Notes: An RNA of 177 nucleotides, treated with 2A3 and DMS and read out base by base. For 2A3, 2,022 sequencing reads were counted. For 2A3 the reverse transcriptase was SuperScript II with manganese. It was measured as part of the RMDB library OK2TST. The reactions ran in a buffer of 150 mM KOAc, 10 mM MgCl2 and 150 mM bicine (pH 8.5), at 24 C.
RNA sequence: GGGAACGACUCGAGUAGAGUCGAAAAGGGAAAAGACUGAACAGGAUUUCUCAACUUGGGUUAAGAAUGGUUGGAACUUCAGUGGUCACGCAACUAUUAACGACUGCGAAGCUUUUGAUGCUUCACAUAAGUAAUGGUCUUUCGAGACCAUUACUUAAAAAGAAACAACAACAACAAC
Reactivity to 2A3 in 0.01 (KOAc 150mM, MgCl2 10mM, bicine 150mM(pH8.5), 24C), signal-to-noise 3, nucleotides 027 to 126: g000g020g020a070a060a030a020g160a080c080u110g030a090a030c050a120g040g020a050u000u090u000c040u010c020a000a050c030u100u090g100g040g020u040u060a080a030g050a100a060u100g040g030u030u040g040g020a060a040c020u090u080c040a100g040u060g060g040u060c010a000c060g080c010a030a080c030u070a040u170u040a140a020c040g100a030c030u060g040c120g010a010a020g010c020u190u280u080u230g050a050u180g000c000u010u010c010a010c010a040
Reactivity to DMS in 0.01 (KOAc 150mM, MgCl2 10mM, bicine 150mM(pH8.5), 24C), signal-to-noise 5, nucleotides 027 to 126: g010g010g000a090a060a080a100g000a160c040u010g000a080a100c130a050g010g010a140u000u000u000c020u000c020a060a070c060u000u000g010g010g010u010u000a070a100g000a040a050u000g010g010u000u000g030g000a080a040c060u000u010c120a060g020u000g010g000u000c040a070c120g000c080a040a020c080u000a070u010u010a070a100c140g010a070c120u000g020c050g010a020a020g000c010u000u010u000u000g020a100u010g020c000u000u010c010a040c100a080